[RMDB]
RNA sequence: GGGAACGACUCGAGUAGAGUCGAAAAGCCCGAUGGUUCGCCAUCGGGCAAAAGACUGAGAUCGCAACAGUCAAAAGGAGAACAAAACUCCAAAUGCGUUCAAAACCCCAAAGUUCGCUUUGGGGAAUCCUUCUAUAUCCUUCGGGAUAUAGAAGGAAAAAGAAACAACAACAACAAC
Reactivity to 2A3 in 0.01 (KOAc 150mM, MgCl2 10mM, bicine 150mM(pH8.5), 24C), signal-to-noise 1, nucleotides 027 to 126: g000c010c000c030g010a020u010g000g070u050u110c270g010c090c000a000u020c000g040g000g080c000a000a000a000a070g010a000c030u000g020a000g060a160u040c010g000c000a040a150c000a140g020u000c000a050a010a040a000g060g000a050g030a220a060c090a120a200a000a000c000u010c000c000a000a000a130u040g000c000g000u040u130c060a060a050a150a300c000c000c010c010a000a010a000g020u010u130c300g080c160u000u000u010g030g000g000g020a000a000
Reactivity to DMS in 0.01 (KOAc 150mM, MgCl2 10mM, bicine 150mM(pH8.5), 24C), signal-to-noise 1, nucleotides 027 to 126: g000c010c000c010g000a000u000g020g010u000u020c300g060c000c020a000u000c000g000g000g020c010a000a020a070a060g000a000c000u010g010a130g000a060u000c010g000c000a070a090c020a010g000u010c070a000a050a090a200g000g000a010g010a060a160c130a110a060a170a110c000u000c010c000a010a060a220u000g000c030g000u000u000c190a050a060a110a170c000c000c020c000a010a030a050g010u000u000c170g010c000u000u010u000g010g020g000g040a000a030

An RNA of 177 nucleotides, treated with 2A3 and DMS and read out base by base. DMS (dimethyl sulfate) methylates the pairing face of unpaired adenines and cytosines. For 2A3, 816 sequencing reads were counted. DMS adducts were read by reverse transcription with MarathonRT. The data come from the RNA Mapping Database (RMDB), library M2PK50. The reactions ran in a buffer of 150 mM KOAc, 10 mM MgCl2 and 150 mM bicine (pH 8.5), at 24 C.